[RMDB]
RNA sequence: GGGAACGACUCGAGUAGAGUCGAAAAAGCAUACAAAGUCUACUUUCAGGGACAGAUGAGCCCCAGCUUGUAAAUUAAUUGUGUUCUAAAAGUGCAUAAGUUAGCUGUUUUAGAAAUUACUUGCUCAAAGAAAUAAAUGAUAAAUAAUGGCUAAUUAAGCCCACUAUAUAUUCGUAUAUAGUGGGCUAAAAGAAACAACAACAACAAC
Reactivity to DMS in 0.01 (KOAc 150mM, MgCl2 10mM, bicine 150mM(pH8.5), 24C), signal-to-noise 1, nucleotides 027 to 156: a040g010c010a060u000a300c090a070a070a170g040u000c020u050a020c020u000u010u000c040a100g000g020g010a090c050a200g000a210u000g000a190g030c010c020c000c000a170g000c020u000u000g020u000a050a130a060u000u020a020a110u000u000g020u020g020u000u000c060u000a030a060a090a050g010u000g060c040a080u000a050a110g020u000u000a030g000c020u000g030u000u000u000u000a080g000a180a030a100u000u020a050c000u020u000g000c140u000c110a070a140a200g020a130a030a080u000a060a050a110u060g020a190u020a110a050a070u000a110a020u020g000g020c000u000a030a050u000u000a130
Reactivity to 2A3 in 0.01 (KOAc 150mM, MgCl2 10mM, bicine 150mM(pH8.5), 24C), signal-to-noise 1, nucleotides 027 to 156: a000g040c030a030u050a030c070a020a130a000g030u050c010u070a150c030u040u120u110c020a010g020g000g000a000c000a000g070a020u030g010a030g000c000c000c000c000a000g010c030u020u030g010u010a010a060a060u050u090a030a040u060u090g020u000g000u030u000c020u020a050a000a000a080g070u070g010c010a020u040a090a130g070u080u070a000g010c040u010g000u000u010u010u030a020g000a030a070a000u050u020a010c010u000u020g000c000u000c130a030a030a090g020a000a070a000u170a000a100a100u230g030a000u060a080a080a030u100a010a000u090g000g010c010u110a020a060u300u300a300